[RMDB]
The data come from the RNA Mapping Database (RMDB), library OK3TST. An RNA of 207 nucleotides, treated with 2A3 and read out base by base. Values cover nucleotides 27 to 156. The 2A3 profile rests on 804 reads.

RNA sequence: GGGAACGACUCGAGUAGAGUCGAAAAAUGUUCUUUCAUAUUUUGGAACAAAAUAAUACUUUACUUCAAGACUAUUCAUAGGGUGUUCCAUGAGGUCAGAACUACUUCCAUAGUAUUUCUAAGAUGUUAUUACCAUGCAGUAUGCUCAUUAUUGCUACCCCUAUUACUCGUUCGCGAGUAAUAGGGGAAAAGAAACAACAACAACAAC
Reactivity to 2A3 in 0.01 (KOAc 150mM, MgCl2 10mM, bicine 150mM(pH8.5), 24C), signal-to-noise 2, nucleotides 027 to 156: a000u020g000u020u000c010u070u080u040c050a100u050a300u180u140u060u070g000g020a000a000c020a000a060a000a020u120a010a070u080a060c040u040u110u100a040c040u110u110c060a100a040g060a130c060u070a080u200u160c090a050u160a140g080g010g000u030g010u040u030c030c000a040u060g010a010g040g000u010c040a020g020a020a010c010u020a030c010u110u050c050c000a060u050a080g110u040a060u030u060u020c020u060a080a050g030a110u110g060u080u080a130u040u090a080c090c020a030u150g000c010a010g000u000a000u020g000c040u020c120a090u130u130a020u120u090g000c000u100a080